[RMDB]
RNA sequence: GGGAACGACUCGAGUAGAGUCGAAAAGCGCAAACCGUUCUGCAAUGUGUAAUUGGUGCUUGAUUAGCCAAGAUUCCAUAACUCACUACCCAGCUCUUAAGAUGGUUCAAACACAUCUUAGCCACUAACCCGAGCUCGUUCGCGAGCUCGAAAAGAAACAACAACAACAAC
Reactivity to 2A3 in 0.01 (KOAc 150mM, MgCl2 10mM, bicine 150mM(pH8.5), 24C), signal-to-noise 6, nucleotides 027 to 129: g090c050g030c050a040a050a040c030c030g030u040u030c000u020g030c020a010a100u100g020u000g020u120a080a070u050u040g040g010u060g020c000u060u020g090a170u120u190a020g050c040c000a000a010g020a160u130u020c020c000a010u040a090a050c010u000c070a010c000u030a050c010c000c000a010g010c030u040c010u060u070a040a050g000a010u040g040g020u100u130c080a110a140a010c060a010c000a070u000c000u000u000a000g030c020c020a060c030u020a020a060c000c010
Reactivity to DMS in 0.01 (KOAc 150mM, MgCl2 10mM, bicine 150mM(pH8.5), 24C), signal-to-noise 5, nucleotides 027 to 129: g000c060g000c080a030a080a030c180c050g040u000u000c040u030g020c060a090a070u020g040u040g000u050a000a000u000u000g050g000u020g020c090u000u010g030a120u060u040a200g070c140c030a110a100g010a180u000u000c030c030a030u020a110a200c080u020c020a080c050u020a110c030c010c050a090g030c040u030c010u020u060a060a060g020a020u030g010g040u000u000c230a080a090a090c240a000c020a050u040c000u060u000a080g060c070c020a080c120u010a040a140c090c080
The record gives the reactivity of an RNA of 170 nucleotides to 2A3 and DMS. For DMS the reverse transcriptase was MarathonRT. The reactions ran in a buffer of 150 mM KOAc, 10 mM MgCl2 and 150 mM bicine (pH 8.5), at 24 C. For 2A3, 9,174 sequencing reads were counted. For DMS, 10,702 sequencing reads were counted. Reactivities are given for positions 27 through 129.